[RMDB]
RNA sequence: GGGAACGACUCGAGUAGAGUCGAAAACGGUUGUUCGAGCCCUUCUGCUUGCGGGCCAUUUGCCGCUGGUAGCGGGCGAGGUUGCGGGCCUUGCGGUCCAGAUGCUUCGGGUUGGCGAUCUUCUCGCCGUCCUUGUUAAUUUCGAUUAACAAGGACGAAAAGAAACAACAACAACAAC
Reactivity to 2A3 in 0.01 (KOAc 150mM, MgCl2 10mM, bicine 150mM(pH8.5), 24C), signal-to-noise 5, nucleotides 027 to 126: c040g030g000u000u020g020u060u060c040g030a030g030c010c010c000u100u090c020u040g040c010u020u070g030c040g030g000g080c050c070a150u100u100u230g040c010c010g010c020u030g090g050u040a010g020c020g000g000g000c010g010a020g000g000u010u050g020c050g030g000g020c000c010u030u130g020c080g010g000u020c010c000a010g060a140u070g020c000u040u070c000g070g000g000u040u060g010g000c020g030a040u030c030u090u020c050u010c010g030c020
Reactivity to DMS in 0.01 (KOAc 150mM, MgCl2 10mM, bicine 150mM(pH8.5), 24C), signal-to-noise 9, nucleotides 027 to 126: c080g010g010u000u000g010u000u000c070g020a200g000c040c020c010u000u040c040u000g000c010u000u000g020c080g000g000g020c100c170a160u020u030u030g010c000c020g000c020u000g010g000u010a040g030c300g010g010g000c020g010a020g000g010u000u000g010c300g000g000g000c020c010u010u050g010c050g000g010u010c010c020a080g000a090u000g000c020u010u000c050g000g000g000u010u000g010g000c040g000a040u010c050u000u000c040u000c010g010c210
Source information
Chemical mapping of a 177-nucleotide RNA with 2A3 and DMS. Reactivities are given for positions 27 through 126. Source: RMDB libraries RFM100 and RFMREP, as collected in RNAgym. DMS adducts were read by reverse transcription with MarathonRT. The reactions ran in a buffer of 150 mM KOAc, 10 mM MgCl2 and 150 mM bicine (pH 8.5), at 24 C.